[RMDB]
RNA sequence: GGGAACGACUCGAGUAGAGUCGAAAAGGCAAGUGGUAUGAUUUUGGUGACUUCGUAAUCACUCAACCUGGUUCAGGAGUAGCUAUAGUUGAUAGCUACUAUUCUUAUUUGAUGCCUGUGCUCUCAACGCUUGAAGCUAGUUCGCUAGCUUCAAGCGAAAAGAAACAACAACAACAAC
Reactivity to 2A3 in 0.01 (KOAc 150mM, MgCl2 10mM, bicine 150mM(pH8.5), 24C), signal-to-noise 1, nucleotides 027 to 126: g000g000c000a020a000g160u010g050g010u060a000u060g020a030u000u040u040u040g030g010u020g020a020c000u000u000c090g060u040a080a040u020c010a000c010u130c040a000a010c000c000u150g110g220u230u250c030a010g000g020a010g040u000a000g000c000u000a000u020a050g200u070u210g240a040u010a010g030c000u010a010c000u000a010u030u020c000u020u040a080u070u070u120g040a050u060g010c010c010u010g050u020g030c000u010c000u000c060a020a080
Reactivity to DMS in 0.01 (KOAc 150mM, MgCl2 10mM, bicine 150mM(pH8.5), 24C), signal-to-noise 1, nucleotides 027 to 126: g020g010c070a020a020g010u000g000g000u000a030u000g020a010u000u000u000u000g020g000u010g000a030c090u000u010c240g000u020a070a230u000c040a070c010u020c040a070a030c030c030u020g000g010u000u020c090a020g010g010a020g010u010a000g000c000u000a040u000a250g000u000u000g000a090u000a000g020c000u010a000c000u000a020u000u000c010u000u000a070u000u000u010g010a190u010g000c020c020u000g010u010g020c130u000c020u010c020a040a220